[RMDB]
RNA sequence: GGGAACGACUCGAGUAGAGUCGAAAAAUGAAUUGAUUCGUCAAUUCAUGACCGCAAGCGAGCCGAAAGGCAUUUUAUGCGUACGCUCGCGAAAGCCUAAAAAUCAUCGUGUCUUCGGACACGAUAAUGGCUGCGAUAUAUUCGUAUAUCGCAGCCAAAAAGAAACAACAACAACAAC
Reactivity to DMS in 0.01 (KOAc 150mM, MgCl2 10mM, bicine 150mM(pH8.5), 24C), signal-to-noise 1, nucleotides 027 to 126: a010u020g000a020a000u000u000g030a060u000u000c120g020u000c000a000a000u000u000c000a020u000g000a210c060c040g020c180a160a220g040c000g000a000g020c050c020g040a050a230a160g010g000c020a000u000u000u000u010a030u030g000c000g020u000a110c300g000c000u000c020g000c010g010a010a040a060g000c100c070u010a000a000a020a080a140u020c060a020u000c010g000u000g010u000c000u000u010c110g000g000a000c000a020c020g000a000u020a040a030
The record gives the reactivity of an RNA of 177 nucleotides to DMS. DMS adducts were read by reverse transcription with MarathonRT. DMS (dimethyl sulfate) methylates the pairing face of unpaired adenines and cytosines.